[RMDB]
RNA sequence: GGGAACGACUCGAGUAGAGUCGAAAAGAUAUGGACACUCCUAGUCGCGAUGAAACAAGUCGGAAACGACUUGUGGAGCGAUUCUAGGAGGUGUCCUAAGUCAAACAUGGCCUGUUCGCAGGCCAUGGGUUCUCUAACGGUUCGCCGUUAGAGAACCAAAAGAAACAACAACAACAAC
Reactivity to DMS in 0.01 (KOAc 150mM, MgCl2 10mM, bicine 150mM(pH8.5), 24C), signal-to-noise 2, nucleotides 027 to 126: g010a030u000a300u000g010g010a010c000a060c030u000c000c000u000a000g010u000c010g000c000g010a090u020g020a220a140a010c000a020a000g000u000c000g030g010a090a070a250c010g000a040c000u000u000g000u000g000g000a040g000c000g020a030u010u010c100u010a010g010g000a010g020g000u000g010u000c000c010u000a010a080g020u020c020a140a100a300c020a000u000g010g010c010c000u020g000u000u000c270g010c000a010g000g000c000c010a020u000g000
Reactivity to 2A3 in 0.01 (KOAc 150mM, MgCl2 10mM, bicine 150mM(pH8.5), 24C), signal-to-noise 1, nucleotides 027 to 126: g020a020u100a030u180g000g000a010c000a000c010u000c010c000u010a020g040u060c070g040c020g300a300u030g010a020a010a000c010a000a010g020u000c020g030g000a020a050a130c000g020a000c000u000u020g000u000g010g030a000g010c030g030a070u300u100c020u030a010g000g000a020g000g040u020g010u000c000c010u000a110a000g050u040c070a220a000a030c010a010u010g000g000c020c000u040g080u110u150c300g010c200a020g000g050c050c000a000u000g000